[RMDB]
RNA sequence: GGGAACGACUCGAGUAGAGUCGAAAAUGAGUGCCCAAACUGCAACCCAAACCCCACUUAUUUAUCGUUGGGUGCUGGAUGUGUGUGGCCCACUGGGUGGUGUGGCCUACUAGGUGGGCAUGGCCAGAUUCAGUAUCCGGUUCGCCGGAUACUGAAUAAAAGAAACAACAACAACAAC
Reactivity to DMS in 0.01 (KOAc 150mM, MgCl2 10mM, bicine 150mM(pH8.5), 24C), signal-to-noise 3, nucleotides 027 to 126: u000g020a180g010u000g010c010c010c010a040a160a140c040u000g010c030a060a090c040c000c020a020a080a220c110c020c000c010a140c210u000u000a080u010u010u010a040u020c160g010u000u010g000g000g020u000g010c090u000g010g020a060u000g010u010g010u010g030u000g000g010c010c000c000a010c000u000g020g030g000u020g000g020u000g010u010g030g010c030c010u000a010c020u010a080g020g010u000g010g010g020c020a030u000g000g030c020c010a140g000
Reactivity to 2A3 in 0.01 (KOAc 150mM, MgCl2 10mM, bicine 150mM(pH8.5), 24C), signal-to-noise 1, nucleotides 027 to 126: u080g000a000g010u030g040c000c000c000a050a010a040c030u050g000c040a010a170c030c000c000a030a050a030c060c000c020c020a020c060u180u110a180u220u240u100a250u250c080g050u000u000g030g010g010u020g040c060u000g010g030a160u080g090u040g030u030g030u080g130g000c040c040c000a010c000u140g050g250g060u200g030g010u070g100u150g000g000c000c000u000a020c000u020a000g140g000u050g000g020g010c050a050u080g010g090c010c000a050g020